Source: RMDB library OK3TST, as collected in RNAgym. Chemical mapping of a 207-nucleotide RNA with 2A3 and DMS.
[RMDB]
RNA sequence: GGGAACGACUCGAGUAGAGUCGAAAAAGGAUACGGUGUUUUUGCGGUUGCGCCUAUACCUGCCGAUACAGUAUUAUUUACUUACGCGGCCGAAAUAUCAAAUUACGCGUUAACAUUGGCGCAAGAUCGGUGUUAUACAUUUGACGUGGUUGAUGACCAGGAGGUGUAAUUUCGAUUACACCUCCUGAAAAGAAACAACAACAACAAC
Reactivity to 2A3 in 0.01 (KOAc 150mM, MgCl2 10mM, bicine 150mM(pH8.5), 24C), signal-to-noise 2, nucleotides 027 to 156: a000g100g010a080u080a090c060g000g040u040g010u010u040u040u050u040g050c080g050g000u090u060g030c020g010c030c010u060a060u060a050c030c010u020g000c000c000g030a010u040a040c030a010g090u000a000u200u030a180u150u300u060a030c000u030u030a010c210g020c010g000g000c000c000g050a040a070a000u100a030u030c050a040a040a020u050u060a040c020g000c010g040u000u000a000a030c000a050u000u050g020g000c070g020c070a050a050g050a100u090c050g010g030u010g000u030u070a200u030a030c100a120u110u120u210g060a080c040g000u000g000g010u010u020g000a140u040g010a060c080
Reactivity to DMS in 0.01 (KOAc 150mM, MgCl2 10mM, bicine 150mM(pH8.5), 24C), signal-to-noise 1, nucleotides 027 to 156: a000g020g030a130u000a050c010g040g050u010g020u020u000u000u000u080g000c030g050g040u010u000g000c020g020c010c060u020a080u000a060c060c010u000g000c030c010g010a120u000a120c210a070g030u000a070u030u000a140u000u000u010a080c040u000u010a100c070g000c000g010g060c020c100g000a070a050a070u020a070u000c030a020a030a050u000u000a070c070g030c000g000u000u000a040a080c020a070u000u000g020g040c030g000c070a100a100g010a120u000c040g020g020u040g000u000u020a090u010a080c010a300u000u010u010g010a040c080g000u000g020g060u020u000g010a040u000g010a160c110
The RNA was probed in 150 mM KOAc, 10 mM MgCl2 and 150 mM bicine (pH 8.5) at 24 C. For 2A3, 740 sequencing reads were counted.